[RMDB]
RNA sequence: GGGAACGACUCGAGUAGAGUCGAAAAUGUGCUGCGGUGGGACGUCAAGGUCAGUUCGUAUGCUGCGGGAAAUGGCCGCCGAGGAGGUAGGGCUUACGCUUGCGUUUGUCUGUUAUAUCUUGGUGGACCUUACCGUUCACUUCGGUGAACGGUAAGGAAAAGAAACAACAACAACAAC
Reactivity to DMS in 0.01 (KOAc 150mM, MgCl2 10mM, bicine 150mM(pH8.5), 24C), signal-to-noise 1, nucleotides 027 to 126: u010g030u010g000c030u020g020c070g020g020u000g000g000g000a100c080g000u000c110a100a100g010g030u010c020a060g010u010u000c080g020u010a060u010g020c010u020g000c050g020g010g010a060a040a090u020g000g010c010c010g010c010c000g000a040g000g010a100g000g000u000a050g000g000g030c000u000u000a030c070g030c030u000u000g000c010g020u020u010u000g000u000c000u010g010u000u000a030u000a050u020c030u000u010g000g010u000g020g000a130
Reactivity to 2A3 in 0.01 (KOAc 150mM, MgCl2 10mM, bicine 150mM(pH8.5), 24C), signal-to-noise 1, nucleotides 027 to 126: u180g000u060g040c030u000g000c040g010g070u010g060g050g030a000c040g000u060c030a060a060g070g030u020c010a000g010u030u010c040g030u040a010u240g040c030u070g000c010g010g010g000a100a190a160u150g060g030c030c020g000c010c000g020a010g020g010a000g080g000u100a130g050g000g030c010u040u030a020c030g040c040u020u080g050c020g000u030u030u040g020u000c010u010g110u160u040a130u020a010u150c010u000u050g010g010u030g040g000a010

Structure probing data (DMS and 2A3) for a 177-nucleotide construct. For 2A3, 886 sequencing reads were counted. DMS adducts were read by reverse transcription with MarathonRT. For 2A3 the reverse transcriptase was SuperScript II with manganese. Conditions: 150 mM KOAc, 10 mM MgCl2 and 150 mM bicine (pH 8.5), 24 C. Source: RMDB library RFMREP, as collected in RNAgym.